Background
An RNA of 177 nucleotides, treated with 2A3 and DMS and read out base by base. DMS adducts were read by reverse transcription with MarathonRT. Conditions: 150 mM KOAc, 10 mM MgCl2 and 150 mM bicine (pH 8.5), 24 C. Source: RMDB library OK2TST, as collected in RNAgym.
RNA sequence: GGGAACGACUCGAGUAGAGUCGAAAAGUCCGGCCAGAUGUAGCUCAACGCGUUCAGCUCCCCGUCGGGGCUGGUGACGUCGAUGGGCGCGAUGUCGUAUCCGUGUCGUUCGACGAUCCGCACCGUGCGUUAGCCCUCAUUUCGAUGAGGGCUAACGAAAAGAAACAACAACAACAAC
Reactivity to 2A3 in 0.01 (KOAc 150mM, MgCl2 10mM, bicine 150mM(pH8.5), 24C), signal-to-noise 2, nucleotides 027 to 126: g030u000c000c000g000g010c020c010a040g000a100u120g090u170a010g000c000u010c040a030a040c050g010c000g040u070u050c030a000g000c010u070c000c030c010c030g170u090c070g000g000g020g000c030u080g010g020u080g040a030c010g000u160c020g030a010u040g110g000g000c030g050c000g030a050u060g100u150c110g040u100a060u040c040c000g040u020g010u030c050g040u060u050c000g010a030c030g010a110u010c010c010g040c040a030c070c020g070u090g010
Reactivity to DMS in 0.01 (KOAc 150mM, MgCl2 10mM, bicine 150mM(pH8.5), 24C), signal-to-noise 3, nucleotides 027 to 126: g020u000c010c000g000g000c050c080a110g000a070u010g000u010a110g010c020u000c040a070a090c070g000c030g000u000u000c050a050g010c020u000c010c010c110c300g020u000c140g010g010g000g000c020u020g010g010u000g020a100c080g010u000c010g020a080u000g010g010g010c000g000c020g020a050u000g000u010c110g000u010a050u000c050c020g020u010g000u000c020g010u000u000c020g010a070c040g000a110u000c030c030g010c060a080c060c020g000u000g020